[RMDB]
RNA sequence: GGGAACGACUCGAGUAGAGUCGAAAAUCAGACGAAGACUGAAGCUCACCUAGUCUGAGCCGGAAAUCUGCGAUUCUCCUAUGACGCCUAGUCAGGGAUUUCGCUUGAUGAUGGCCCCCCGUCGACACUGUCUGCAAGGUUUCGACCUUGCAGACAGAAAAGAAACAACAACAACAAC
Reactivity to DMS in 0.01 (KOAc 150mM, MgCl2 10mM, bicine 150mM(pH8.5), 24C), signal-to-noise 2, nucleotides 027 to 126: u000c000a010g000a080c020g000a070a150g030a170c160u010g020a170a120g000c100u000c100a080c020c010u000a220g010u000c090u000g010a010g000c000c020g000g010a070a040a040u000c000u000g000c000g000a020u030u010c250u030c010c010u020a040u000g000a000c000g050c190c260u060a130g000u000c040a060g000g000g000a080u000u000u000c000g000c000u100u000g000a030u000g000a300u090g000g050c000c030c020c000c040c020g030u000c070g020a200c240a160
Reactivity to 2A3 in 0.01 (KOAc 150mM, MgCl2 10mM, bicine 150mM(pH8.5), 24C), signal-to-noise 3, nucleotides 027 to 126: u020c000a000g000a010c010g020a110a030g030a050c070u150g100a100a030g060c050u070c070a040c010c020u020a020g020u000c020u010g000a000g000c000c000g000g000a030a140a000u010c010u010g000c000g010a010u020u010c040u120c220c000u160a300u240g000a000c020g080c080c100u100a030g000u000c000a000g000g000g000a000u000u010u000c000g000c000u020u140g000a020u010g000a000u030g000g000c000c000c000c000c010c000g090u100c020g010a030c020a000